Chemical mapping of a 177-nucleotide RNA with DMS and 2A3. Source: RMDB library TTRDEL, as collected in RNAgym. Reactivities are given for positions 27 through 126. For 2A3, 7,623 sequencing reads were counted. For DMS, 4,023 sequencing reads were counted. For 2A3 the reverse transcriptase was SuperScript II with manganese. The reactions ran in a buffer of 150 mM KOAc, 10 mM MgCl2 and 150 mM bicine (pH 8.5), at 24 C.
RNA sequence: GGGAACGACUCGAGUAGAGUCGAAAAGAUAUGGAAGGUUAGGUUGUUCAACAGCUCGGAAACGAGACAUGAACCCUACUGCCUUCCUAAGUCAAAAGUCUUCUAAAGCUUCGGCUUUAGAAGACAACGUUUAUUACCUCUUCGGAGGUAAUAAACGAAAAGAAACAACAACAACAAC
Reactivity to DMS in 0.01 (KOAc 150mM, MgCl2 10mM, bicine 150mM(pH8.5), 24C), signal-to-noise 4, nucleotides 027 to 126: g010a040u000a300u020g010g000a030a010g000g000u000u000a000g010g000u010u010g020u000u000c010a030a080c250a190g000c000u000c000g000g000a090a080a210c000g000a010g000a070c080a180u000g010a010a020c010c010c000u000a020c300u010g010c000c000u000u010c000c010u000a010a090g010u000c020a070a080a130a110g000u000c000u000u000c000u000a000a010a000g000c000u000u010c270g020g000c000u010u000u000a000g000a010a000g010a000c010a020a050
Reactivity to 2A3 in 0.01 (KOAc 150mM, MgCl2 10mM, bicine 150mM(pH8.5), 24C), signal-to-noise 3, nucleotides 027 to 126: g010a020u070a040u120g010g010a010a000g010g010u000u040a000g030g040u160u190g020u270u020c010a090a090c040a200g040c010u000c020g010g030a030a080a030c010g010a000g020a010c010a040u090g000a010a000c000c000c030u020a070c090u050g020c000c000u000u010c000c000u000a040a020g030u000c020a030a050a080a160g010u000c000u000u010c000u010a030a000a000g000c000u040u220c300g140g000c010u000u020u000a010g000a000a010g000a000c000a000a000